[RMDB]
This 177-nucleotide RNA was probed chemically with DMS.
RNA sequence: GGGAACGACUCGAGUAGAGUCGAAAAGAUAUGGAAUAACAUAGUCCUAUCAGCUACCUCCUUGGAUUUAGCUUCGGAAACGAAGCUUGUCAGGAGAAGCUGAGUAGGACUAUGUUAUUCCUAAGUCCUUACACAACAGGUUCGCCUGUUGUGUAAGAAAAGAAACAACAACAACAAC
Reactivity to DMS in 0.01 (KOAc 150mM, MgCl2 10mM, bicine 150mM(pH8.5), 24C), signal-to-noise 3, nucleotides 027 to 126: g020a120u000a300u000g000g010a010a010u000a000a010c000a010u000a010g010u000c000c000u010a040u000c000a000g010c000u000a140c290c000u000c000c010u010u020g020g000a030u000u010u010a020g050c010u000u000c000g010g000a140a120a260c000g010a010a020g000c010u000u000g000u000c000a020g010g000a010g000a150a050g000c000u000g000a020g030u000a000g010g000a010c000u000a010u000g000u000u000a000u000u000c000c000u000a020a090g000u000c040

For DMS, 3,730 sequencing reads were counted.